[RMDB]
RNA sequence: GGGAACGACUCGAGUAGAGUCGAAAAACUAGUGGUUCCUGUGGUUUCACACCGAAGGCCGCGAAGCUAGGAAAGAAAAAGAUAGAAAAGCUGGGUAAGACUCACCUGGCGACUCGUCGUCGACGAACUUGAGUUUAUUGUUCGCAAUAAACUCAAGAAAAGAAACAACAACAACAAC
Reactivity to 2A3 in 0.01 (KOAc 150mM, MgCl2 10mM, bicine 150mM(pH8.5), 24C), signal-to-noise 2, nucleotides 027 to 126: a020c000u000a000g000u010g060g040u030u090c020c030u060g020u070g010g000u030u120u140c080a030c030a040c080c060g060a100a010g040g000c010c000g000c030g040a010a010g000c020u050a040g000g090a140a100a090g090a040a180a010a030a010g100a120u200a040g140a050a100a030a030g010c020u000g010g000g080u110a110a040g080a100c000u050c130a050c010c020u000g000g030c000g040a030c020u040c020g040u000c010g060u030c030g020a050c030g000a040a050
Reactivity to DMS in 0.01 (KOAc 150mM, MgCl2 10mM, bicine 150mM(pH8.5), 24C), signal-to-noise 2, nucleotides 027 to 126: a110c000u000a070g010u000g010g030u010u000c020c010u000g060u000g010g000u000u000u000c100a050c150a180c120c080g020a090a070g000g010c060c020g010c070g010a100a090g020c020u000a010g010g000a060a040a080g010a070a040a100a090a050g030a090u010a130g010a080a130a180a150g010c030u000g000g020g040u010a100a090g020a110c140u000c100a030c010c020u010g000g010c010g000a070c090u000c040g000u000c070g030u000c100g000a140c080g000a020a110

Overview: Chemical mapping of a 177-nucleotide RNA with 2A3 and DMS. The RNA was probed in 150 mM KOAc, 10 mM MgCl2 and 150 mM bicine (pH 8.5) at 24 C. The 2A3 profile rests on 1,433 reads. 2A3 adducts were read by reverse transcription with SuperScript II with manganese. Reactivities are given for positions 27 through 126. The data come from the RNA Mapping Database (RMDB), library VIROID. Values are in units of 0.01, from 0 to 300, in steps of 10.